Background
The record gives the reactivity of an RNA of 177 nucleotides to DMS and 2A3. For DMS, 5,251 sequencing reads were counted. DMS adducts were read by reverse transcription with MarathonRT. Conditions: 150 mM KOAc, 10 mM MgCl2 and 150 mM bicine (pH 8.5), 24 C. 2A3 adducts were read by reverse transcription with SuperScript II with manganese.
[RMDB]
RNA sequence: GGGAACGACUCGAGUAGAGUCGAAAAGUCAAAUUACCAUGGUCAGAUGUGAUUUGUCAAUUGGAGUCUCAAAUCAAAUGGGAUUGGACAUCAGUCGAACCGAUUUGUGUGACUACAAUUGCAGUAGGACUACUAGACUGUUCGCAGUCUAGUAGUCAAAAGAAACAACAACAACAAC
Reactivity to DMS in 0.01 (KOAc 150mM, MgCl2 10mM, bicine 150mM(pH8.5), 24C), signal-to-noise 4, nucleotides 027 to 126: g010u010c050a030a020a040u010u000a060c100c060a070u010g000g000u000c110a080g000a100u000g010u010g010a050u000u010u000g010u010c010a020a010u000u000g000g000a030g010u000c000u010c060a060a090a100u020c020a020a020a040u010g000g000g010a160u000u010g010g010a040c040a170u010c260a120g020u000c020g010a040a060c030c020g010a010u000u000u000g000u000g000u010g000a020c000u000a020c000a010a020u010u000g000c100a100g010u010a080g020
Reactivity to 2A3 in 0.01 (KOAc 150mM, MgCl2 10mM, bicine 150mM(pH8.5), 24C), signal-to-noise 4, nucleotides 027 to 126: g060u020c010a010a010a060u050u040a050c070c040a050u050g120g050u160c040a040g050a210u100g090u060g100a060u070u080u050g140u140c030a010a010u000u010g020g000a010g020u000c020u000c000a100a200a090u110c010a000a030a050u070g080g020g070a170u050u010g080g000a040c020a170u290c110a130g010u000c020g050a000a010c020c010g070a030u020u000u020g070u010g030u060g010a010c000u000a020c000a000a010u020u010g030c040a030g060u080a040g050